Source: RMDB library OK2TST, as collected in RNAgym.
The record gives the reactivity of an RNA of 177 nucleotides to DMS and 2A3.
Reactivities are given for positions 27 through 126.
DMS (dimethyl sulfate) methylates the pairing face of unpaired adenines and cytosines.
Values are in units of 0.01, from 0 to 300, in steps of 10.

RNA sequence: GGGAACGACUCGAGUAGAGUCGAAAAAUCAGCUCGACGCUUUCGCUGCCGCAGUGCUGCGCGGGCAAGCGGUCAAGACGACGCCCAAGGACGCGGUCGAGAACAUGAGCGCGAUCCACGCGAUCUAGUAUAACGACCUGUUCGCAGGUCGUUAUACAAAAGAAACAACAACAACAAC
Reactivity to DMS in 0.01 (KOAc 150mM, MgCl2 10mM, bicine 150mM(pH8.5), 24C), signal-to-noise 4, nucleotides 027 to 126: a100u010c050a110g010c040u000c020g010a080c030g020c010u000u000u010c070g040c060u000g030c050c020g010c020a110g030u010g020c130u000g000c110g000c060g000g010g000c080a070a040g010c010g010g010u000c060a040a110g000a120c070g000a060c070g020c020c010c020a150a180g000g000a040c060g010c020g020g000u000c000g010a080g000a090a120c240a090u020g000a040g000c020g000c020g000a090u000c030c040a140c210g020c080g010a060u010c030u010a140
Reactivity to 2A3 in 0.01 (KOAc 150mM, MgCl2 10mM, bicine 150mM(pH8.5), 24C), signal-to-noise 3, nucleotides 027 to 126: a000u020c010a000g070c040u020c010g030a030c020g020c000u060u060u070c070g040c090u090g050c030c000g040c070a040g060u110g300c100u050g010c070g040c050g000g040g030c020a030a020g000c020g060g100u110c030a040a020g080a040c020g010a020c010g030c030c000c000a010a090g020g000a000c020g010c020g010g130u010c020g010a010g070a130a070c070a110u190g000a010g070c010g000c020g030a060u000c010c010a050c040g040c020g040a020u010c010u040a030

DMS adducts were read by reverse transcription with MarathonRT.
The reactions ran in a buffer of 150 mM KOAc, 10 mM MgCl2 and 150 mM bicine (pH 8.5), at 24 C.